[RMDB]
RNA sequence: GGGAACGACUCGAGUAGAGUCGAAAAAUUGCCAUUAAACAGAUGAGAACAUAAUGGAAGUGCACUUUCAGCAUAAUUGUCAUUAGCAUAGCUAAUUGUUUGUGUUCAUUUAAAAGCUAAGCGUAUAGUAGUGGAUUUAUUUCGAUAAAUCCACUACAAAAGAAACAACAACAACAAC
Reactivity to 2A3 in 0.01 (KOAc 150mM, MgCl2 10mM, bicine 150mM(pH8.5), 24C), signal-to-noise 5, nucleotides 027 to 126: a000u110u090g060c020c000a050u080u140a130a110a040c060a020g100a120u140g030a070g020a160a010c010a030u070a030a020u080g040g010a050a070g040u060g090c020a040c130u050u100u110c040a040g000c030a060u090a160a120u200u120g070u080c020a020u000u050a000g010c050a110u050a090g010c010u040a110a060u110u070g060u110u030u020g050u030g040u030u020c040a050u070u110u110a050a170a020a000g000c040u080a060a020g030c020g080u110a100u100a200
Reactivity to DMS in 0.01 (KOAc 150mM, MgCl2 10mM, bicine 150mM(pH8.5), 24C), signal-to-noise 5, nucleotides 027 to 126: a120u010u010g010c010c010a120u010u010a070a060a120c150a090g020a070u010g020a100g010a080a050c060a050u000a050a040u000g000g000a050a040g020u010g020c180a070c070u000u000u000c060a070g000c090a050u010a070a080u000u000g010u000c060a060u000u000a040g010c010a100u000a060g020c030u010a050a070u010u010g020u000u010u000g030u000g010u000u010c040a110u000u010u000a040a060a090a080g020c040u010a040a070g010c070g020u020a080u000a130